[RMDB]
Chemical mapping of a 177-nucleotide RNA with DMS and 2A3. For 2A3, 7,052 sequencing reads were counted. For DMS the reverse transcriptase was MarathonRT. Values cover nucleotides 27 to 126. The RNA was probed in 150 mM KOAc, 10 mM MgCl2 and 150 mM bicine (pH 8.5) at 24 C.
RNA sequence: GGGAACGACUCGAGUAGAGUCGAAAAGACAAGUGCUUCGGCACUUGUCAAAUAAGCAAGUAGAAAUGGCCAAACUACAUGCAUCGAAAGAAAGGCCAUUAAAAACUGUCCAGUUCGCUGGACAGAAGCCUUACAUAAUCUUCGGAUUAUGUAAGGCAAAAGAAACAACAACAACAAC
Reactivity to DMS in 0.01 (KOAc 150mM, MgCl2 10mM, bicine 150mM(pH8.5), 24C), signal-to-noise 2, nucleotides 027 to 126: g000a030c010a000a000g000u010g000c000u000u000c230g040g030c000a000c000u020u000g030u010c000a000a060a080u010a090a080g000c000a060a150g000u000a010g010a020a030a000u000g020g010c030c010a220a230a030c000u010a010c000a070u000g020c000a150u010c170g000a100a110a240g030a070a150a090g060g040c000c000a150u000u010a050a030a060a150a080c000u000g010u010c000c000a000g000u020u000c180g010c000u000g000g000a000c000a000g000a030a080
Reactivity to 2A3 in 0.01 (KOAc 150mM, MgCl2 10mM, bicine 150mM(pH8.5), 24C), signal-to-noise 4, nucleotides 027 to 126: g010a000c000a000a000g000u010g020c010u080u110c210g050g000c000a000c010u000u000g000u000c000a000a000a000u020a000a020g020c020a020a070g000u010a010g020a030a030a020u020g010g010c010c000a030a020a010c010u010a010c010a010u050g000c000a140u200c150g150a160a120a090g170a130a120a020g050g000c000c020a010u030u040a010a000a000a000a020c010u000g010u000c000c000a010g000u030u060c140g060c090u000g000g000a000c000a000g000a010a010